[RMDB]
This 177-nucleotide RNA was probed chemically with DMS. The RNA was probed in 150 mM KOAc, 10 mM MgCl2 and 150 mM bicine (pH 8.5) at 24 C. The data come from the RNA Mapping Database (RMDB), library OK2TST. Reactivities are given for positions 27 through 126.
RNA sequence: GGGAACGACUCGAGUAGAGUCGAAAAAUUGUUCGUGCCACUUUAUCAUAAGCCUCACCUACUGCGUCAUCUCGUGUUUCACCAAUGACUUCAAAUGAUAAAUGAUCUUUCAUAUAAACUAAUUCAGAUAGAGAAAGUCUUUCGAGACUUUCUCUAUAAAAGAAACAACAACAACAAC
Reactivity to DMS in 0.01 (KOAc 150mM, MgCl2 10mM, bicine 150mM(pH8.5), 24C), signal-to-noise 1, nucleotides 027 to 126: a160u020u000g010u010u010c090g040u020g010c030c040a090c090u000u000u000a020u010c050a100u010a080a100g000c070c050u010c040a080c050c010u000a090c090u000g030c100g000u000c050a050u010c020u000c070g030u000g020u010u000u010c040a090c050c060a080a110u000g010a070c080u010u000c090a070a110a060u030g010a070u010a070a070a090u020g000a030u030c050u010u010u010c020a080u010a130u000a140a020a120c060u010a100a100u000u000c050a080g000